[RMDB]
RNA sequence: GGGAACGACUCGAGUAGAGUCGAAAAGUGCGCUAUUUCGAUAGCGCACAAAGGCCGCGAGUCUCGCUCGGCGGCGCGCGACAGCGCGCAGCGCAGCCGGAACAUAACGCCACUUCGGUGGCGUUAAAGUAUCUUAAAUGUUCGCAUUUAAGAUACUAAAAGAAACAACAACAACAAC
Reactivity to 2A3 in 0.01 (KOAc 150mM, MgCl2 10mM, bicine 150mM(pH8.5), 24C), signal-to-noise 4, nucleotides 027 to 126: g000u010g000c000g000c000u010a020u020u110u040c060g070a010u000a000g000c000g000c000a000c000a000a000a000g000g000c000c000g010c010g000a000g020u000c000u010c040g010c040u160c100g010g000c000g000g010c010g010c000g000c000g070a080c060a150g030c010g000c000g020c050a010g000c020g000c000a000g010c010c010g020g050a070a040c040a040u060a030a000c000g000c010c000a000c010u040u060c200g090g000u000g010g000c000g000u000u000a000a010
Reactivity to DMS in 0.01 (KOAc 150mM, MgCl2 10mM, bicine 150mM(pH8.5), 24C), signal-to-noise 8, nucleotides 027 to 126: g010u000g010c000g020c000u000a010u000u000u020c160g010a020u000a010g000c000g010c010a000c010a010a060a110g010g000c000c010g010c000g000a010g000u000c010u000c020g010c010u010c080g000g010c000g010g030c000g020c010g010c010g000a180c300a170g000c000g020c000g020c000a020g000c000g020c010a020g010c000c010g010g010a080a100c110a170u000a010a000c000g010c000c000a010c000u000u010c200g020g020u000g000g000c000g000u000u000a000a040
The data come from the RNA Mapping Database (RMDB), library M2PK50. Structure probing data (2A3 and DMS) for a 177-nucleotide construct. Reactivities are given for positions 27 through 126. High DMS reactivity at an A or C suggests that its Watson-Crick edge is free.